[RMDB]
RNA sequence: GGGAACGACUCGAGUAGAGUCGAAAAGAUCGAUGGGUGACGCGUUGUGAAGAGAAUUGGUAUUUCUCCAAAACAGUGACAAAUCAUAUCGUUCAUGAACCUGUCAGCAAAGAUGAGUGUGUAGAAGUCCUAGUCACGUGUUCGCACGUGACUAGGAAAAAGAAACAACAACAACAAC
Reactivity to DMS in 0.01 (KOAc 150mM, MgCl2 10mM, bicine 150mM(pH8.5), 24C), signal-to-noise 2, nucleotides 027 to 126: g000a040u000c040g010a020u000g000g000g020u010g000a210c240g010c090g010u000u000g000u000g000a300a170g000a010g000a020a030u010u010g060g000u000a200u030u000u010c010u000c010c050a050a110a080a050c070a050g000u010g040a080c060a050a210a020u010c060a040u000a040u010c040g020u000u010c050a070u010g000a110a140c020c030u000g000u000c130a050g000c120a030a040a090g000a050u000g000a100g020u000g020u000g040u000a100g030a090a130g010

Conditions: 150 mM KOAc, 10 mM MgCl2 and 150 mM bicine (pH 8.5), 24 C. This 177-nucleotide RNA was probed chemically with DMS. DMS adducts were read by reverse transcription with MarathonRT. In probing experiments dimethyl sulfate is read out at A N1 and C N3, which are open when not base-paired.